[RMDB]
RNA sequence: GGGAACGACUCGAGUAGAGUCGAAAAGAUAUGGAGAUCAUUAGGGAGAGCAACAAGGCUAAGACAGUAUCUCGGAAACGAGAUAUCGAGCCUUGUCUUGCUCGUUGAUCUAAUGAUCUCCUAAGUCGGAACACUAGUUGUUCGCAACUAGUGUUCCAAAAGAAACAACAACAACAAC
Reactivity to DMS in 0.01 (KOAc 150mM, MgCl2 10mM, bicine 150mM(pH8.5), 24C), signal-to-noise 1, nucleotides 027 to 126: g010a020u000a080u000g000g010a030g020a020u000c010a010u010u000a000g010g000g000a010g000a010g020c000a020a030c000a030a000g010g010c010u030a220a100g030a100c300a060g000u000a020u000c000u000c000g000g010a010a000a050c000g030a000g000a000u000a010u000c010g020a000g050c000c020u000u000g000u000c060u000u000g010c030u000c000g000u000u000g000a010u020c010u010a000a020u000g010a000u000c000u000c000c000u000a000a010g000u010c010
The record gives the reactivity of an RNA of 177 nucleotides to DMS. The reactions ran in a buffer of 150 mM KOAc, 10 mM MgCl2 and 150 mM bicine (pH 8.5), at 24 C.